[RMDB]
RNA sequence: GGGAACGACUCGAGUAGAGUCGAAAAGCUAGGUAUUCGUACCUAGCAAAAAAGCGUACUACGGGAGCAGUCGACUACCCACCAUAUUCCCAAAUAGGAAUAUGAGGUCGUACUGCGAGGAUCGUAUCGCAAAAAGCUGAAGGUUCGCCUUCAGCAAUUCUUCACUAUAAUUCGUUAUAGUGAAGAAAAAAGAAACAACAACAACAAC
Reactivity to DMS in 0.01 (KOAc 150mM, MgCl2 10mM, bicine 150mM(pH8.5), 24C), signal-to-noise 4, nucleotides 027 to 156: g030c010u000a010g010g000u010a030u000u000c300g050u000a020c010c000u000a000g060c000a000a030a050a070a040a090g020c010g010u010a080c090u000a030c010g000g000g020a230g020c010a010g000u000c020g000a040c010u000a020c020c000c010a300c140c010a010u000a010u000u000c000c000c010a030a180a190u000a110g020g020a050a010u000a010u010g000a080g020g000u000c000g000u020a020c000u010g000c010g000a090g000g010a080u000c040g000u010a070u000c040g040c030a030a110a080a120a160g010c000u000g000a030a020g010g010u000u000c300g010c030c000u000u000c000a010g010c000a000a020
Reactivity to 2A3 in 0.01 (KOAc 150mM, MgCl2 10mM, bicine 150mM(pH8.5), 24C), signal-to-noise 4, nucleotides 027 to 156: g000c010u010a000g010g000u010a030u050u100c100g000u010a020c010c000u000a000g020c000a000a000a000a000a020a020g050c050g020u100a050c060u000a010c030g000g000g010a010g010c000a010g020u040c000g000a010c000u200a300c010c000c010a000c000c000a000u000a010u000u030c000c010c030a130a200a140u230a090g000g000a000a000u000a000u000g010a010g000g000u000c010g030u160a050c000u010g040c000g010a090g000g020a000u010c010g000u010a000u100c010g000c010a080a070a020a030a000g000c000u000g000a010a000g060g010u060u180c280g080c060c010u000u000c000a000g000c010a000a000
The record gives the reactivity of an RNA of 207 nucleotides to DMS and 2A3. The 2A3 profile rests on 4,537 reads. It was measured as part of the RMDB library RNAMAK. For DMS the reverse transcriptase was MarathonRT. For DMS, 10,852 sequencing reads were counted.